[RMDB]
RNA sequence: GGGAACGACUCGAGUAGAGUCGAAAAGGAUCAGUUCGCUGAUCCAAAAGGAAUCAAUAGUAGUUAACCCUCUCUUCCGAAGCGAGCCGGGGGCGGUGGGAGCCCGGUGAAGACGGUUAAUGAAACGGCAGUUCCAAAAGGUGGUGUUCGCACCACCGUGUUCUGUAUCUUUCGAGAUACAGAACACAAAAGAAACAACAACAACAAC
Reactivity to DMS in 0.01 (KOAc 150mM, MgCl2 10mM, bicine 150mM(pH8.5), 24C), signal-to-noise 1, nucleotides 027 to 156: g000g010a010u000c000a020g020u010u000c300g000c010u000g020a000u000c010c010a000a020a060a080g030g020a070a040u010c050a100a140u010a170g030u010a240g010u000u000a030a010c020c000c000u000c030u000c020u000u000c010c120g010a040a040g000c040g010a060g020c000c000g000g010g020g020g010c050g020g040u000g010g010g000a080g000c030c000c010g010g010u000g030a000a020g000a030c100g000g000u030u000a020a010u000g000a150a120a060c070g020g000c010a110g020u010u000c000c010a080a050a070a100g000g000u000g020g000u000g010u000u020c180g050c000a050c010c000a010c000c010
Reactivity to 2A3 in 0.01 (KOAc 150mM, MgCl2 10mM, bicine 150mM(pH8.5), 24C), signal-to-noise 1, nucleotides 027 to 156: g000g000a000u000c000a000g020u090u090c160g040c080u000g000a000u000c000c000a000a010a010a030g030g000a040a020u130c040a050a100u070a080g010u000a000g000u000u000a000a000c010c000c000u020c000u000c000u020u000c010c070g030a000a000g000c000g000a000g000c010c000g000g000g000g020g010c110g020g010u000g010g000g010a030g040c000c000c000g010g000u000g000a000a000g000a010c170g000g000u000u000a000a000u010g010a020a020a010c030g080g000c080a060g020u010u000c010c000a040a080a040a080g000g000u010g000g000u020g020u040u110c210g020c080a000c000c000a000c000c010
An RNA of 207 nucleotides, treated with DMS and 2A3 and read out base by base. For 2A3 the reverse transcriptase was SuperScript II with manganese. It was measured as part of the RMDB library PDB130. For DMS the reverse transcriptase was MarathonRT.